[RMDB]
RNA sequence: GGGAACGACUCGAGUAGAGUCGAAAAGAUAUGGAAACUGAAUGCCGACGACGUACGUAACAUCUCGGAAACGAGUGGUACAUCAGGCACAGUUUCCUAAGUCAAAACUCAGACUUCGGUCUGAGAAGUCUCUUAAUACGUUCGCGUAUUAAGAGACAAAAGAAACAACAACAACAAC
Reactivity to DMS in 0.01 (KOAc 150mM, MgCl2 10mM, bicine 150mM(pH8.5), 24C), signal-to-noise 5, nucleotides 027 to 126: g000a020u000a030u000g010g000a000a000a000c010u000g010a100a120u000g020c010c000g010a050c250g000a010c030g010u000a010c020g020u000a120a170c260a080u010c010u000c000g010g000a020a010a030c000g010a010g010u000g000g000u000a000c000a010u010c020a010g030g030c010a040c000a010g000u000u000u000c000c000u000a000a060g000u000c010a100a080a100a190c010u000c000a010g000a010c000u000u020c210g010g010u000c000u000g010a010g000a050a100
Reactivity to 2A3 in 0.01 (KOAc 150mM, MgCl2 10mM, bicine 150mM(pH8.5), 24C), signal-to-noise 7, nucleotides 027 to 126: g000a000u010a010u040g000g010a000a010a010c010u020g030a300a210u170g010c010c020g070a300c040g010a000c030g080u020a000c000g020u030a120a080c040a280u150c020u000c010g000g000a010a000a000c000g000a010g010u100g060g000u050a000c010a040u080c050a070g000g000c010a000c000a020g000u000u000u000c000c000u000a010a000g000u010c010a000a030a040a200c000u000c000a010g000a010c000u080u110c300g080g000u000c000u000g000a000g000a010a010